Background:
An RNA of 177 nucleotides, treated with 2A3 and read out base by base. Source: RMDB library RFM100, as collected in RNAgym. The RNA was probed in 150 mM KOAc, 10 mM MgCl2 and 150 mM bicine (pH 8.5) at 24 C.
[RMDB]
RNA sequence: GGGAACGACUCGAGUAGAGUCGAAAACGCAGAUCUAGCUGAAACAUGAGUGAUAACCGCGUCUUCGGACAAGGGAAGUUGCCUAAUCAUGCUCCCAAGAAAAACUUCUAAGCUUCAGGUAUAAGGUACGUGGAACCUGAUUCGUCAGGUUCCACGUAAAAGAAACAACAACAACAAC
Reactivity to 2A3 in 0.01 (KOAc 150mM, MgCl2 10mM, bicine 150mM(pH8.5), 24C), signal-to-noise 2, nucleotides 027 to 126: c040g000c030a030g000a050u090c110u210a050g050c000u000g030a020a020a020c100a180u110g030a040g010u080g000a080u000a130a000c000c000g000c040g010u020c050u070u050c190g040g000a000c030a100a110g210g000g000a060a170g080u070u030g000c000c000u080a040a040u010c020a000u070g070c000u020c060c000c000a000a000g130a010a070a000a050a040c000u060u030c000u080a020a190g030c080u070u040c140a020g000g000u070a150u010a090a050g070g000u000